[RMDB]
RNA sequence: GGGAACGACUCGAGUAGAGUCGAAAAUCUGUUGACACGUAAUCGUAUAGUCGAAGUCGGACUACGGUUACCGCAACAGAAGUUAGACUGCGUCAAGUCCGACUUGGACUAUUCUAAAAUCUAACCACUUCUCCAUAGUAUUCGUACUGUGGAGAAGAAAAGAAACAACAACAACAAC
Reactivity to DMS in 0.01 (KOAc 150mM, MgCl2 10mM, bicine 150mM(pH8.5), 24C), signal-to-noise 9, nucleotides 027 to 126: u000c040u000g010u000u010g010a120c130a070c160g010u010a060a060u010c100g010u000a040u000a020g010u000c000g010a040a050g010u000c050g010g010a010c010u000a080c070g010g010u000u000a070c140c080g010c050a030a050c060a060g000a080a100g010u010u000a070g000a100c040u000g000c120g010u000c130a090a030g000u000c000c000g000a050c060u000u000g010g010a020c000u000a020u000u000c040u010a060a050a070a080u010c050u000a060a110c100c190a170
Reactivity to 2A3 in 0.01 (KOAc 150mM, MgCl2 10mM, bicine 150mM(pH8.5), 24C), signal-to-noise 8, nucleotides 027 to 126: u020c000u020g040u040u080g060a030c020a010c130g060u080a030a070u110c040g000u020a010u010a030g010u000c070g140a040a010g020u030c010g000g000a000c000u030a030c050g030g010u050u050a050c030c020g000c000a030a050c020a050g120a090a000g010u010u090a040g010a060c040u030g030c040g050u060c070a040a010g000u000c000c000g000a030c000u000u030g080g000a000c000u000a010u030u000c020u030a010a010a000a050u010c020u030a020a030c020c000a030
Chemical mapping of a 177-nucleotide RNA with DMS and 2A3. DMS adducts were read by reverse transcription with MarathonRT. The RNA was probed in 150 mM KOAc, 10 mM MgCl2 and 150 mM bicine (pH 8.5) at 24 C.